Source: RMDB library OK2TST, as collected in RNAgym. Chemical mapping of a 177-nucleotide RNA with DMS and 2A3. 2A3 is a SHAPE reagent: it acylates the 2'-hydroxyl of flexible nucleotides of all four kinds. DMS adducts were read by reverse transcription with MarathonRT. The RNA was probed in 150 mM KOAc, 10 mM MgCl2 and 150 mM bicine (pH 8.5) at 24 C.
RNA sequence: GGGAACGACUCGAGUAGAGUCGAAAAAGCAUUCUCGACAAACUCACGACGGAUCAGAGAGUGAGGGAUCACAUCGCUGCACGAGGCGUCUGGAGGAAGGUCGCCUCGUACGGUGGACCAGGCGAAGACUACGCCUGUUCUUCGGAACAGGCGUAGUAAAAGAAACAACAACAACAAC
Reactivity to DMS in 0.01 (KOAc 150mM, MgCl2 10mM, bicine 150mM(pH8.5), 24C), signal-to-noise 2, nucleotides 027 to 126: a080g010c110a110u000u000c030u000c030g020a190c170a070a130a120c060u000c030a080c050g010a160c100g010g010a080u000c120a110g000a070g020a130g020u000g010a040g020g020g010a110u010c060a100c090a110u000c050g020c050u000g020c020a000c020g010a020g000g000c010g010u000c000u000g000g030a170g020g000a070a120g010g000u000c000g000c000c010u000c010g020u010a000c020g020g030u000g020g010a040c080c050a060g040g000c050g000a080a090g000
Reactivity to 2A3 in 0.01 (KOAc 150mM, MgCl2 10mM, bicine 150mM(pH8.5), 24C), signal-to-noise 2, nucleotides 027 to 126: a000g070c060a100u050u000c020u000c010g040a060c020a050a120a010c030u040c030a030c080g110a020c060g150g080a160u180c020a060g130a020g000a010g050u030g020a080g030g010g020a060u070c050a020c020a140u090c040g000c030u030g020c020a000c000g020a000g000g000c000g020u020c020u070g190g030a220g110g110a130a020g040g000u030c000g000c000c000u010c000g000u000a000c010g000g000u000g010g010a020c010c040a040g050g050c070g040a020a000g040